[RMDB]
RNA sequence: GGGAACGACUCGAGUAGAGUCGAAAAGGGGAACACCCUGUCCAACGAGUCGGUAGGACCGAUAAACUGGUCGCGGUCCGUCAGGCGCAGCCCUGGUGGACCGCCCGUAUCAGCCAGCAGCCGCUGCCUCAUCAAAUUUUUUCGAAAAUUUGAUGAGAAAAGAAACAACAACAACAAC
Reactivity to DMS in 0.01 (KOAc 150mM, MgCl2 10mM, bicine 150mM(pH8.5), 24C), signal-to-noise 9, nucleotides 027 to 126: g010g010g000g000a180a120c230a160c000c000c000u000g000u020c010c000a130a290c070g000a060g010u000c000g000g010u010a080g010g010a240c020c010g000a080u020a050a110a100c130u030g000g010u000c050g010c000g000g000u000c000c000g010u000c000a010g000g000c030g020c180a080g010c120c000c000u010g000g010u000g000g000a010c000c000g010c000c010c020g010u030a060u010c100a080g000c060c030a070g010c060a110g010c090c090g000c010u000g000c130
Reactivity to 2A3 in 0.01 (KOAc 150mM, MgCl2 10mM, bicine 150mM(pH8.5), 24C), signal-to-noise 9, nucleotides 027 to 126: g040g010g010g030a120a040c030a150c090c000c000u010g040u010c000c000a020a040c030g050a020g050u030c010g010g050u070a060g070g120a040c010c010g010a020u100a060a150a030c070u100g020g030u070c080g000c000g020g000u000c010c010g010u010c000a000g010g000c070g010c180a040g010c020c000c000u010g000g010u000g000g000a000c000c000g000c000c000c000g020u050a080u090c030a010g040c040c010a020g010c030a010g060c050c060g020c020u020g010c000